The data come from the RNA Mapping Database (RMDB), library TTRDES. Structure probing data (2A3 and DMS) for a 177-nucleotide construct. DMS adducts were read by reverse transcription with MarathonRT. The reactions ran in a buffer of 150 mM KOAc, 10 mM MgCl2 and 150 mM bicine (pH 8.5), at 24 C.
[RMDB]
RNA sequence: GGGAACGACUCGAGUAGAGUCGAAAAGAUAUGGAACUCCUAGAGCGUUGAAAUACCGGGUCGGAAACGACCCGUAUGGAGCUCGGGAGUUCCUAAGUCAAAGGGCGAACAGUUCGCUGUUCGCCCACCCCAUAAAUACGUUCGCGUAUUUAUGGGGAAAAGAAACAACAACAACAAC
Reactivity to 2A3 in 0.01 (KOAc 150mM, MgCl2 10mM, bicine 150mM(pH8.5), 24C), signal-to-noise 2, nucleotides 027 to 126: g000a000u000a000u020g000g000a000a010c000u000c000c020u080a180g000a000g000c010g090u300u190g050a000a010a010u070a030c160c300g020g020g010u000c010g020g000a020a010a000c010g000a000c010c010c010g000u010a000u010g000g010a040g000c010u000c020g000g010g010a000g000u000u000c000c000u000a000a000g000u010c010a020a080a250g030g000g000c000g000a000a000c010a000g030u110u140c280g100c170u000g000u010u000c000g000c010c000c000a000
Reactivity to DMS in 0.01 (KOAc 150mM, MgCl2 10mM, bicine 150mM(pH8.5), 24C), signal-to-noise 3, nucleotides 027 to 126: g000a000u000a040u010g000g000a010a000c000u000c000c000u000a070g020a010g040c000g000u010u010g010a210a210a020u010a000c110c170g010g000g020u000c000g030g000a000a010a030c010g000a010c000c000c000g020u000a000u000g000g000a030g040c000u000c000g000g000g010a020g010u000u000c000c000u010a010a070g000u000c010a100a090a140g040g010g020c010g010a020a010c010a010g020u010u020c300g020c010u000g010u000u000c000g030c000c000c000a010